[RMDB]
RNA sequence: GGGAACGACUCGAGUAGAGUCGAAAACCUGGAGGACUAAGAAGGCCAAGUCUGAUGAAGCAAGCCUUGGCUGAUACACUCCUCCUAGAAAAAAAGGGUUGGAGAGAGCAGCCCUUCAUGGAGAAGGCAGUGGGGUACGAUUCGUCGUACCCCACUGAAAAGAAACAACAACAACAAC
Reactivity to 2A3 in 0.01 (KOAc 150mM, MgCl2 10mM, bicine 150mM(pH8.5), 24C), signal-to-noise 3, nucleotides 027 to 126: c010c000u000g000g000a000g000g020a010c030u040a070a110g030a070a070g070g000c010c000a000a000g000u000c040u030g120a190u160g220a180a040g120c130a050a000g010c010c000u000u000g000g000c000u030g000a000u040a090c050a020c000u000c000c000u000c000c000u020a020g150a020a210a010a000a000a000a000g050g000g000u050u020g120g010a130g000a010g020a020g140c020a020g000c000c000c000u020u040c040a090u070g030g010a130g000a080a080g140g020
Reactivity to DMS in 0.01 (KOAc 150mM, MgCl2 10mM, bicine 150mM(pH8.5), 24C), signal-to-noise 2, nucleotides 027 to 126: c000c000u000g040g010a010g030g020a020c080u020a230a060g020a120a300g020g000c010c000a000a020g010u000c020u000g000a140u040g020a090a090g060c120a100a070g000c090c000u010u000g010g010c010u010g000a100u050a190c150a140c300u000c000c010u000c000c000u020a110g030a000a000a060a090a090a010a020g010g010g000u000u000g060g030a150g010a100g080a090g010c000a050g000c040c000c000u000u010c070a010u020g000g010a160g030a050a040g000g000
Annotation: The data come from the RNA Mapping Database (RMDB), libraries RFM100 and RFMREP. An RNA of 177 nucleotides, treated with 2A3 and DMS and read out base by base. Values cover nucleotides 27 to 126. The reactions ran in a buffer of 150 mM KOAc, 10 mM MgCl2 and 150 mM bicine (pH 8.5), at 24 C. For 2A3 the reverse transcriptase was SuperScript II with manganese.